[RMDB]
RNA sequence: GGGAACGACUCGAGUAGAGUCGAAAAGGAUGGUAACAAAGUGAUUACGAUAGUUCACUGGAUCAAGGAAGCCGCUUUGUCUGGCGAGCAGUCGGCCCUGAUAGUUGGCUUCAAUAUCAGGCUUCGCCGGAUGCUACUUGUUCGCAAGUAGCAUCCGAAAAGAAACAACAACAACAAC
Reactivity to DMS in 0.01 (KOAc 150mM, MgCl2 10mM, bicine 150mM(pH8.5), 24C), signal-to-noise 4, nucleotides 027 to 126: g030g020a080u000g010g010u010a040a130c100a070a100a070g040u010g010a070u020u010a090c110g020a120u000a090g020u000u000c010a030c030u000g000g010a070u010c120a070a070g020g020a060a070g020c030c030g030c080u000u010u010g020u000c070u010g020g000c010g000a080g000c100a110g010u000c010g020g000c200c020c030u010g010a010u000a030g020u000u000g040g010c120u010u000c020a070a070u000a020u000c030a020g000g010c300u000u000c090g020c070
Reactivity to 2A3 in 0.01 (KOAc 150mM, MgCl2 10mM, bicine 150mM(pH8.5), 24C), signal-to-noise 2, nucleotides 027 to 126: g070g010a040u100g030g070u080a100a030c050a050a170a020g020u060g050a100u110u180a060c100g070a120u100a120g050u040u020c030a010c070u050g000g000a060u090c030a030a070g060g010a090a010g030c010c010g030c090u120u110u070g070u010c010u010g020g000c030g000a020g010c020a020g060u060c020g090g000c010c030c040u010g020a000u010a070g160u040u130g050g020c000u090u070c030a000a010u030a020u010c000a010g050g060c000u110u090c070g050c040

This 177-nucleotide RNA was probed chemically with DMS and 2A3. Conditions: 150 mM KOAc, 10 mM MgCl2 and 150 mM bicine (pH 8.5), 24 C. For 2A3 the reverse transcriptase was SuperScript II with manganese. Reactivities are given for positions 27 through 126.